Chemical mapping of a 177-nucleotide RNA with 2A3 and DMS.
RNA sequence: GGGAACGACUCGAGUAGAGUCGAAAACGCGCGACACGUCUGUUGACGACGACCCCGCCCUGUACCCCGACGAGUACAUCGAACUCGACCAGCUUGGGCUGAUCCGAUCGACCGAGCCGCAGUGCGCGGGGUUCAAUAGAUUCGUCUAUUGAACCCCAAAAGAAACAACAACAACAAC
Reactivity to 2A3 in 0.01 (KOAc 150mM, MgCl2 10mM, bicine 150mM(pH8.5), 24C), signal-to-noise 4, nucleotides 027 to 126: c040g040c010g020c020g040a020c030a020c110g090u030c060u090g170u150u150g080a090c050g020a040c020g080a090c020c010c000c010g040c000c010c000u050g030u100a060c020c020c000c020g030a050c020g010a020g020u050a030c040a170u100c110g040a040a030c010u000c020g040a060c040c040a000g040c020u080u110g050g050g000c030u030g010a020u020c040c050g040a080u040c020g030a040c000c010g000a000g010c020c000g010c040a030g020u050g060c040g000c060
Reactivity to DMS in 0.01 (KOAc 150mM, MgCl2 10mM, bicine 150mM(pH8.5), 24C), signal-to-noise 6, nucleotides 027 to 126: c080g010c060g010c060g010a100c140a130c090g020u000c050u000g020u000u010g000a090c070g000a110c070g010a150c050c010c020c020g000c010c010c020u000g010u000a130c050c000c020c020g010a150c070g010a050g000u000a060c110a100u000c090g000a090a070c080u000c020g010a100c040c030a060g000c070u000u000g010g010g010c020u000g000a050u010c040c060g000a100u010c040g000a070c030c020g000a080g010c020c030g010c060a050g010u010g000c090g010c130
The reactions ran in a buffer of 150 mM KOAc, 10 mM MgCl2 and 150 mM bicine (pH 8.5), at 24 C. For DMS the reverse transcriptase was MarathonRT. Source: RMDB library OK2TST, as collected in RNAgym.